[RMDB]
RNA sequence: GGGAACGACUCGAGUAGAGUCGAAAAAGAAAGCGCAUCUACAGCAGCAACAUCAUCCACAAAAUAGCGAACAACAACUUUUGAUGUUCUAGGCUUAUUAAUACCCUUGUAGCACGGAUUUGCAUUACAUGCCUAAUACUUUCGAGUAUUAGGCAUGAAAAGAAACAACAACAACAAC
Reactivity to 2A3 in 0.01 (KOAc 150mM, MgCl2 10mM, bicine 150mM(pH8.5), 24C), signal-to-noise 3, nucleotides 027 to 126: a000g070a010a030a000g020c050g010c020a020u000c020u070a050c010a040g040c010a000g040c010a000a050c000a030u020c000a010u020c000c010a040c050a040a090a020a030u120a040g060c060g030a020a010c000a000a010c010a010a080c030u190u160u100u110g040a030u040g010u000u020c000u030a040g040g030c000u060u050a020u050u080a140a060u110a130c000c010c000u010u050g080u040a010g000c020a010c040g020g040a080u030u020u210g040c030a030u050u070a040
Reactivity to DMS in 0.01 (KOAc 150mM, MgCl2 10mM, bicine 150mM(pH8.5), 24C), signal-to-noise 8, nucleotides 027 to 126: a080g000a080a080a070g020c070g020c040a040u000c030u000a080c080a060g010c060a040g010c060a050a050c060a040u000c040a050u000c040c040a060c110a060a040a080a070u010a060g010c050g010a030a040c060a050a060c060a050a090c190u000u000u000u000g010a080u000g010u000u000c040u000a080g010g010c030u000u000a060u000u000a070a070u000a100c060c030c020u000u000g010u000a050g010c050a040c080g010g000a110u000u000u000g010c080a080u010u000a130
This 177-nucleotide RNA was probed chemically with 2A3 and DMS. For DMS the reverse transcriptase was MarathonRT. Reactivities are given for positions 27 through 126. 2A3 is a SHAPE reagent: it acylates the 2'-hydroxyl of flexible nucleotides of all four kinds. Conditions: 150 mM KOAc, 10 mM MgCl2 and 150 mM bicine (pH 8.5), 24 C.